[RMDB]
RNA sequence: GGGAACGACUCGAGUAGAGUCGAAAAGACCAGCCUCGUCAAUCCCCCCACGAUGCCCGACGAGAGCUUCCAGGCGUACCUCCUUGAGGAGGGCUCGGACGGACAACUGGAAAUCGUGGAGGACUGGACUACCUACGAAAUUCGUUUCGUAGGUAGUAAAAGAAACAACAACAACAAC
Reactivity to DMS in 0.01 (KOAc 150mM, MgCl2 10mM, bicine 150mM(pH8.5), 24C), signal-to-noise 7, nucleotides 027 to 126: g000a240c010c000a020g000c020c000u000c030g020u010c130a190a180u010c020c000c000c070c010c010a010c020g000a020u000g010c070c010c020g000a160c020g010a040g010a090g020c020u000u000c120c150a090g000g010c090g010u010a100c050c020u000c010c000u010u010g010a170g010g010a020g020g010g010c010u000c010g000g000a210c070g000g000a040c030a090a140c170u000g000g000a080a140a060u000c010g020u000g000g000a040g000g010a090c050u000g000g000
Reactivity to 2A3 in 0.01 (KOAc 150mM, MgCl2 10mM, bicine 150mM(pH8.5), 24C), signal-to-noise 4, nucleotides 027 to 126: g030a000c000c000a000g000c000c020u060c040g210u190c100a160a300u180c000c000c000c010c000c000a000c010g000a020u070g030c010c000c010g030a020c010g010a010g010a010g050c000u070u030c040c020a040g010g010c010g020u040a130c000c010u030c010c020u090u180g090a110g060g010a010g000g010g020c000u000c010g040g000a050c000g020g000a000c010a080a070c100u100g060g000a070a100a010u010c010g000u010g020g010a030g020g000a140c030u050g000g010
The record gives the reactivity of an RNA of 177 nucleotides to DMS and 2A3. Conditions: 150 mM KOAc, 10 mM MgCl2 and 150 mM bicine (pH 8.5), 24 C. The data come from the RNA Mapping Database (RMDB), library OK2TST. 2A3 adducts were read by reverse transcription with SuperScript II with manganese. DMS adducts were read by reverse transcription with MarathonRT. DMS (dimethyl sulfate) methylates the pairing face of unpaired adenines and cytosines.